[RMDB]
RNA sequence: GGGAACGACUCGAGUAGAGUCGAAAAGAUAUGGACCCUGCAGCUUUUGACGAGAAAGGUGUCGGAAACGACACUUUCUCGAUAAGCUGUCAGGGUCCUAAGUCAAAGAAGUAGUUCGCUACUUCAACUUAUGCAACACGUUCGCGUGUUGCAUAAGAAAAGAAACAACAACAACAAC
Reactivity to 2A3 in 0.01 (KOAc 150mM, MgCl2 10mM, bicine 150mM(pH8.5), 24C), signal-to-noise 1, nucleotides 027 to 126: g050a020u080a030u090g020g030a000c010c000c060u050g010c000a010g000c010u300u120u210u300g300a210c050g000a000g060a020a010a050g300g070u110g020u000c000g090g030a110a110a040c030g000a030c010a010c030u010u000u010c010u010c000g000a000u010a020a000g030c000u010g000u040c010a000g000g020g010u000c020c000u010a000a000g000u030c010a080a000a000g000a030a000g010u020a000g060u030u300c300g000c250u060a040c070u040u000c020a040a000
Reactivity to DMS in 0.01 (KOAc 150mM, MgCl2 10mM, bicine 150mM(pH8.5), 24C), signal-to-noise 2, nucleotides 027 to 126: g000a040u010a300u010g000g000a010c000c000c010u010g010c010a010g010c000u000u000u000u010g020a180c150g010a010g010a010a010a010g020g020u000g010u020c010g000g000a070a110a190c010g020a030c000a040c000u000u000u000c000u010c010g000a060u000a010a020g000c000u000g000u010c020a020g010g000g000u010c000c000u000a000a080g020u010c030a090a070a190g010a010a010g000u000a020g010u000u020c260g030c000u010a010c000u000u000c010a120a160
The record gives the reactivity of an RNA of 177 nucleotides to 2A3 and DMS. Values are in units of 0.01, from 0 to 300, in steps of 10. 2A3 adducts were read by reverse transcription with SuperScript II with manganese. It was measured as part of the RMDB library TTRDES. The 2A3 profile rests on 1,651 reads.